[RMDB]
RNA sequence: GGGAACGACUCGAGUAGAGUCGAAAAGGCGUCUUCGCUGCCUCGGCCGCCCUGCACUGACCGGUAGCCGCCGUAAUCGCGGCAUUGUUCCCAUAAACGGAUGUGGGUGUGGGUGCCGAAGUAGCAGGACUAUCGGCUACUUCGGUAGCCGAUAGUCAAAAGAAACAACAACAACAAC
Reactivity to DMS in 0.01 (KOAc 150mM, MgCl2 10mM, bicine 150mM(pH8.5), 24C), signal-to-noise 3, nucleotides 027 to 126: g010g010c140g040u000c020u000u000c120g010c010u000g000c010c020u020c020g000g050c020c060g010c050c000c000u000g030c020a020c020u000g000a110c010c010g010g050u000a130g010c000c010g040c020c110g010u000a130a080u010c300g010c020g020g020c010a080u000u010g010u000u000c000c000c000a170u000a060a090a100c040g010g000a130u010g020u010g000g010g020u000g020u000g010g020g020u000g000c000c000g010a020a020g010u000a010g010c000a140g010
Reactivity to 2A3 in 0.01 (KOAc 150mM, MgCl2 10mM, bicine 150mM(pH8.5), 24C), signal-to-noise 3, nucleotides 027 to 126: g100g030c060g080u020c050u120u080c080g010c020u020g000c010c010u000c000g000g000c050c050g050c020c010c020u070g020c020a020c030u050g070a090c000c030g020g090u040a030g020c000c000g010c010c010g090u090a080a050u210c050g010c000g000g020c010a020u040u230g020u010u020c020c020c020a040u140a020a220a000c020g010g020a090u130g060u180g300g010g020u040g020u030g000g000g020u040g010c000c000g000a000a000g010u020a010g000c010a020g080
This 177-nucleotide RNA was probed chemically with DMS and 2A3.
Reactivities are given for positions 27 through 126.
For DMS, 2,983 sequencing reads were counted.
Reactivities are rounded to 0.1 and cut off at 0 and 3.
The reactions ran in a buffer of 150 mM KOAc, 10 mM MgCl2 and 150 mM bicine (pH 8.5), at 24 C.